This 207-nucleotide RNA was probed chemically with 2A3. Source: RMDB library RNAMAK, as collected in RNAgym. Values cover nucleotides 27 to 156. The 2A3 profile rests on 923 reads. Conditions: 150 mM KOAc, 10 mM MgCl2 and 150 mM bicine (pH 8.5), 24 C.

[RMDB]
RNA sequence: GGGAACGACUCGAGUAGAGUCGAAAAGACGGUUGGGUUCGCCCAACCGUCAAAAAACCGUAGGCACAGCUUUUGACGUUGAUGUCUUCGAAAGAGGACUACCAACGAUAAGCUGAGCCUAAACGGAAAAAGUGGUUGAAGUUCGCUUCAACCACAACAUCUGUCAAUUCUUCGGAAUUGACAGAUGAAAAGAAACAACAACAACAAC
Reactivity to 2A3 in 0.01 (KOAc 150mM, MgCl2 10mM, bicine 150mM(pH8.5), 24C), signal-to-noise 1, nucleotides 027 to 156: g030a000c010g020g030u000u000g040g080g010u090u200c230g110c020c000c000a000a000c000c000g000u000c000a000a000a000a000a010a010c010c000g010u030a010g000g000c000a000c010a030g020c010u130u170u180u300g240a150c040g000u000u000g010a010u020g010u000c040u000u030c040g060a050a080a030g010a020g000g000a000c010u090a070c040c000a010a000c000g000a000u000a060a010g000c000u000g000a010g000c000c000u000a000a020a030c010g030g090a020a020a090a020a060g000u000g010g000u000u000g000a000a040g000u090u210c190g140c120u010u000c000a000a000c000c000a000c000a000a000